Chemical mapping of a 177-nucleotide RNA with 2A3 and DMS. DMS adducts were read by reverse transcription with MarathonRT. The data come from the RNA Mapping Database (RMDB), library M2PK50. The RNA was probed in 150 mM KOAc, 10 mM MgCl2 and 150 mM bicine (pH 8.5) at 24 C. For 2A3 the reverse transcriptase was SuperScript II with manganese. Values cover nucleotides 27 to 126.
[RMDB]
RNA sequence: GGGAACGACUCGAGUAGAGUCGAAAAAUAGUGUUAUUCGUAACACUAUAUAUCCGAACUCAAGGAUUCGUUCCAGAGACAUGCAUGCUAGCAUGAAUGCAACUGAACAAGCGUUCGCGCUUGUUAACAUGACAGGGAGGUUCGCCUCCCUGUCAUGAAAAGAAACAACAACAACAAC
Reactivity to 2A3 in 0.01 (KOAc 150mM, MgCl2 10mM, bicine 150mM(pH8.5), 24C), signal-to-noise 3, nucleotides 027 to 126: a000u000a000g000u020g000u020u000a030u040u060c260g030u040a010a010c000a000c010u000a000u000a000u000a010u000c060c020g030a180a070c010u020c030a060a060g110g000a050u030u010c010g000u000u000c000c000a010g020a000g000a080c000a010u010g010c010a000u140g070c060u150a060g030c000a020u010g050a080a020u120g010c040a110a080c070u100g030a010a010c000a010a000g000c010g050u080u100c260g000c000g000c050u000u000g000u000u000a020a010
Reactivity to DMS in 0.01 (KOAc 150mM, MgCl2 10mM, bicine 150mM(pH8.5), 24C), signal-to-noise 3, nucleotides 027 to 126: a010u000a010g010u000g000u000u000a020u000u010c180g010u000a000a010c000a000c000u000a000u000a050u000a120u020c100c020g010a080a040c010u000c000a060a190g000g000a030u000u000c000g000u000u010c000c000a110g000a120g000a150c000a020u000g000c000a040u000g020c120u020a120g010c010a010u000g000a060a040u000g010c060a100a110c150u000g010a050a020c000a010a000g010c010g020u000u020c230g030c040g020c000u000u000g000u000u000a040a150